[RMDB]
RNA sequence: GGGAACGACUCGAGUAGAGUCGAAAAGACACGACGGAGACGUCGUGUCAAGUCCAGUGCGAAAGCACUGGACAAAUAAGGGAUGUUUUUCUCGCUGACUUUCAGCCCCAAGUAAAAAAUGUCAGCAAUACCAUAGUGGUUUCGACCACUAUGGUAUAAAAGAAACAACAACAACAAC
Reactivity to 2A3 in 0.01 (KOAc 150mM, MgCl2 10mM, bicine 150mM(pH8.5), 24C), signal-to-noise 1, nucleotides 027 to 126: g010a000c000a000c000g010a000c000g000g030a060g020a090c010g030u000c000g020u020g010u010c010a010a000g010u000c000c000a000g000u000g000c010g080a100a020a010g020c010a000c000u010g020g010a000c010a000a040a000u120a040a040g060g010g000a050u020g020u000u020u000u010u010c050u030c060g000c010u020g010a010c000u050u060u050c020a000g030c020c030c010c030a090a020g120u250a000a060a000a010a020a060u110g000u000c000a000g000c020a010
Reactivity to DMS in 0.01 (KOAc 150mM, MgCl2 10mM, bicine 150mM(pH8.5), 24C), signal-to-noise 3, nucleotides 027 to 126: g000a000c000a000c000g000a010c010g020g020a280g000a220c020g030u000c000g010u000g010u000c000a020a080g020u000c000c000a010g000u000g020c000g010a090a090a170g020c010a030c000u000g000g000a000c000a010a070a070u030a110a170g010g000g000a010u000g000u000u000u000u000u000c050u000c140g000c000u010g000a010c010u010u000u000c010a030g000c020c010c000c200a080a090g020u000a000a010a030a000a010a010u000g010u000c010a000g000c010a110